Structure probing data (2A3 and DMS) for a 177-nucleotide construct. For DMS, 2,240 sequencing reads were counted. The reactions ran in a buffer of 150 mM KOAc, 10 mM MgCl2 and 150 mM bicine (pH 8.5), at 24 C. Source: RMDB library OK2TRN, as collected in RNAgym. For 2A3 the reverse transcriptase was SuperScript II with manganese. Reactivities are given for positions 27 through 126.
RNA sequence: GGGAACGACUCGAGUAGAGUCGAAAACGAAACGAUACCCACUUUGCCAGGCAAGUGGAUGUGACCUGGCAUGAUACCAAUCUUACAUUCACCUGGAGUGAUAACACCUGGGCAGUUCGGACCGAUCGCCAUACAUCAACUUCGGUUGAUGUAUGGCAAAAGAAACAACAACAACAAC
Reactivity to 2A3 in 0.01 (KOAc 150mM, MgCl2 10mM, bicine 150mM(pH8.5), 24C), signal-to-noise 1, nucleotides 027 to 126: c030g050a040a010a000c100g040a050u090a100c010c000c050a010c060u040u040u110g000c000c000a010g000g000c020a090a030g060u040g060g090a080u080g050u020g080a190c000c010u000g000g000c020a000u010g000a020u050a060c050c020a040a050u010c030u060u110a050c010a050u010u030c000a010c010c030u050g090g010a130g070u080g050a060u010a220a060c040a020c010c020u010g000g030g010c020a020g030u040u090c050g060g060a090c010c020g020a070u080c080
Reactivity to DMS in 0.01 (KOAc 150mM, MgCl2 10mM, bicine 150mM(pH8.5), 24C), signal-to-noise 3, nucleotides 027 to 126: c060g010a100a070a150c190g000a130u000a170c020c010c010a050c120u000u000u010g010c000c020a040g020g010c090a050a100g000u000g020g000a050u010g010u000g000a210c050c000u000g010g000c000a030u000g000a110u030a080c170c120a100a020u010c150u010u010a110c060a040u000u000c010a020c030c070u000g000g000a100g030u000g020a100u020a060a060c050a070c050c020u000g030g010g010c070a040g000u000u020c050g020g000a080c030c030g000a080u010c150